[RMDB]
The data come from the RNA Mapping Database (RMDB), library M2RFPK.
Structure probing data (DMS and 2A3) for a 207-nucleotide construct.
2A3 adducts were read by reverse transcription with SuperScript II with manganese.
For 2A3, 704 sequencing reads were counted.

RNA sequence: GGGAACGACUCGAGUAGAGUCGAAAAAAGGAAUUAGCGUGCCUUCAUGCUAAGGGUUUGAUAUCAGCUAAAACCCGGUGCAUUCAUCAAUGCAGGUUAAGCCAAAGGGAUGUCCCGACCGGAGGCCAAAAGUUCGCUACGUUCGCGUAGCGAACAACCAAUCCGACAAGUUCGCUUGUCGGAUUGGAAAAGAAACAACAACAACAAC
Reactivity to DMS in 0.01 (KOAc 150mM, MgCl2 10mM, bicine 150mM(pH8.5), 24C), signal-to-noise 1, nucleotides 027 to 156: a090a040g000g000a080a110u000u000a080g030c020g030u000g000c060c030u000u010c020a090u010g050c030u000a300a130g000g010g000u000u000u010g020a190u000a100u000c100a120g000c090u000a170a020a040a050c000c010c000g050g040u000g030c010a030u010u000c100a080u000c070a060a090u000g000c050a020g020g010u000u020a030a050g030c020c040a010a300a150g030g000g010a060u000g000u000c000c000c000g000a100c030c030g000g000a300g000g030c000c060a020a180a060a080g010u000u000c010g010c010u010a000c030g010u000u010c250g090c030g080u000a020g050c030g010a000a000c010a030a030
Reactivity to 2A3 in 0.01 (KOAc 150mM, MgCl2 10mM, bicine 150mM(pH8.5), 24C), signal-to-noise 1, nucleotides 027 to 156: a000a000g210g020a060a070u100u020a110g020c070g050u060g000c020c020u050u100c060a020u030g030c000u030a020a040g000g000g010u040u020u030g040a090u080a100u230c090a000g050c050u020a000a020a020a020c030c000c000g030g010u030g000c000a010u050u130c060a060u060c070a130a110u110g070c060a030g180g000u060u170a080a010g000c000c000a010a000a000g030g000g020a030u030g010u000c000c000c000g030a010c000c000g000g000a000g000g000c000c030a000a010a000a030g000u000u000c010g000c000u000a010c000g030u050u000c180g030c000g090u000a000g010c000g000a000a000c000a010a000